[RMDB]
RNA sequence: GGGAACGACUCGAGUAGAGUCGAAAAGUUUGACUGUUCGCAGUCAAACAAAGGCUAAGGUAUAAAAAUCUGCUAGUUACCUAUGCCAAAAACGAGCAGAAAAAACGGCGUACUUCGGUACGCCGAAGUGCAUAACAUACUUCGGUAUGUUAUGCACAAAAGAAACAACAACAACAAC
Reactivity to 2A3 in 0.01 (KOAc 150mM, MgCl2 10mM, bicine 150mM(pH8.5), 24C), signal-to-noise 2, nucleotides 027 to 126: g000u000u000u000g000a000c000u000g020u060u100c210g020c060a000g000u000c010a000a010a000c000a010a040a020g020g000c020u060a050a050g000g060u040a080u080a110a250a060a040a140u030c000u010g010c010u010a020g090u040u000a000c010c000u010a020u130g040c030c060a100a080a000a000a010c100g020a010g000c000a020g040a030a100a000a000a000a020c000g010g010c000g000u000a000c010u010u070c230g140g000u010a010c000g000c020c000g000a000a000
Reactivity to DMS in 0.01 (KOAc 150mM, MgCl2 10mM, bicine 150mM(pH8.5), 24C), signal-to-noise 2, nucleotides 027 to 126: g010u000u000u000g010a020c000u000g030u010u010c190g010c000a000g000u010c000a040a040a010c000a060a110a140g000g000c000u010a250a030g000g010u000a020u020a030a070a110a060a070u000c000u020g000c000u000a150g010u000u000a040c010c010u000a090u000g020c000c010a020a030a030a060a130c210g010a060g000c010a020g010a000a080a060a060a200a140c010g000g000c010g030u010a000c000u000u030c230g020g020u000a000c000g000c000c000g000a000a020